[RMDB]
RNA sequence: GGGAACGACUCGAGUAGAGUCGAAAACACGAACCGCGGCCACCGCGGUCAGCGGAGCGCGUAUCCAGCUGUUCGCCGCCCUCGUUCACGACGGUAACCGGUCGUACUGGGAUGAGGACUAUGCGCGGGGCGUGGAAAAUUUCGAUUUUCCACGCCCAAAAGAAACAACAACAACAAC
Reactivity to 2A3 in 0.01 (KOAc 150mM, MgCl2 10mM, bicine 150mM(pH8.5), 24C), signal-to-noise 3, nucleotides 027 to 126: c100a010c030g070a020a010c000c000g010c040g050g000c120c110a220c070c030g000c020g050g010u000c000a010g000c020g000g030a060g020c020g000c000g040u030a050u100c040c010a060g030c030u040g040u040u030c030g050c030c030g020c000c000c000u010c010g000u020u010c010a010c050g010a000c000g000g110u110a080a140c090c020g100g030u030c020g020u020a060c150u120g080g000g000a000u040g010a030g000g020a020c020u100a070u130g020c010g000c040g020
Reactivity to DMS in 0.01 (KOAc 150mM, MgCl2 10mM, bicine 150mM(pH8.5), 24C), signal-to-noise 1, nucleotides 027 to 126: c010a010c130g030a070a000c000c030g000c000g010g020c070c010a180c270c050g020c130g010g000u000c000a040g010c000g050g000a050g000c050g000c020g000u000a230u000c060c010a240g040c110u000g010u000u000c070g000c000c080g050c080c000c000u000c050g010u030u000c000a050c040g000a070c040g010g000u000a100a140c120c050g010g000u010c000g030u030a000c010u050g010g030g030a100u000g040a020g000g000a090c000u010a070u040g000c000g000c040g000
The record gives the reactivity of an RNA of 177 nucleotides to 2A3 and DMS. DMS adducts were read by reverse transcription with MarathonRT. It was measured as part of the RMDB library OK1LIB. For DMS, 1,386 sequencing reads were counted. The 2A3 profile rests on 1,753 reads.